[RMDB]
RNA sequence: GGGAACGACUCGAGUAGAGUCGAAAACGUCGUUCUCGCUACGAUAUCGUCGCCAAGAGCUACAAUCUGUUCUGCCGCAACGUUGAAAUGGAGAUAGUGGUUCGGAUGCUGGCAGGCCCGGGCGAUGGCGUACCACGAGGUUCGCCUCGUGGUACGCAAAAGAAACAACAACAACAAC
Reactivity to 2A3 in 0.01 (KOAc 150mM, MgCl2 10mM, bicine 150mM(pH8.5), 24C), signal-to-noise 2, nucleotides 027 to 126: c070g020u000c000g000u000u000c000u000c040g060c050u260a100c050g020a040u060a000u180c070g030u000c020g020c010c000a240a030g080a050g000c070u080a020c010a100a090u060c020u030g030u100u000c020u020g060c030c040g080c070a070a010c070g020u110u090g100a100a070a030u090g000g070a030g020a040u210a050g180u110g130g090u000u010c000g000g050a120u030g040c060u130g050g000c010a020g100g080c020c020c020g120g020g000c020g010a000u090g040